[RMDB]
RNA sequence: GGGAACGACUCGAGUAGAGUCGAAAAAAAGUGUACGAAAGAACAAAGAAGCAAUCAAACCGAGUAGUGAAAUGUUGGCUUCAGUCCAAAAUGGGCAAACACUACAGACGGAGCCAAAGGCAAUUAACAACUACUAAUCGUUCGCGAUUAGUAGUUGAAAAGAAACAACAACAACAAC
Reactivity to DMS in 0.01 (KOAc 150mM, MgCl2 10mM, bicine 150mM(pH8.5), 24C), signal-to-noise 4, nucleotides 027 to 126: a040a030a060g020u000g000u000a050c070g010a070a050a060g000a050a050c070a070a060a060g010a070a060g010c040a070a070u000c090a050a060a090c120c050g010a070g010u000a030g020u010g000a070a080a060u010g000u000u000g010g010c020u000u000c050a070g000u010c020c060a010a050a090a100u010g010g000g000c100a050a050a090c050a010c020u000a060c180a060g000a090c030g020g000a050g010c020c050a030a040a040g000g010c130a050a060u010u000a070a130
Reactivity to 2A3 in 0.01 (KOAc 150mM, MgCl2 10mM, bicine 150mM(pH8.5), 24C), signal-to-noise 3, nucleotides 027 to 126: a000a000a000g080u040g020u040a030c020g030a010a080a060g030a070a020c040a020a080a070g110a040a020g060c030a020a080u100c030a050a030a030c010c030g030a020g030u050a000g000u010g050a070a050a120u190g030u080u030g000g000c010u070u050c030a030g030u040c030c020a030a180a040a140u130g010g050g010c020a010a070a010c040a020c030u030a000c000a010g070a020c020g020g010a000g000c000c000a010a010a010g090g000c030a010a000u080u050a120a030

This 177-nucleotide RNA was probed chemically with DMS and 2A3. Values cover nucleotides 27 to 126. For 2A3, 2,928 sequencing reads were counted. Source: RMDB library M2PK90, as collected in RNAgym. For 2A3 the reverse transcriptase was SuperScript II with manganese. Conditions: 150 mM KOAc, 10 mM MgCl2 and 150 mM bicine (pH 8.5), 24 C. For DMS the reverse transcriptase was MarathonRT.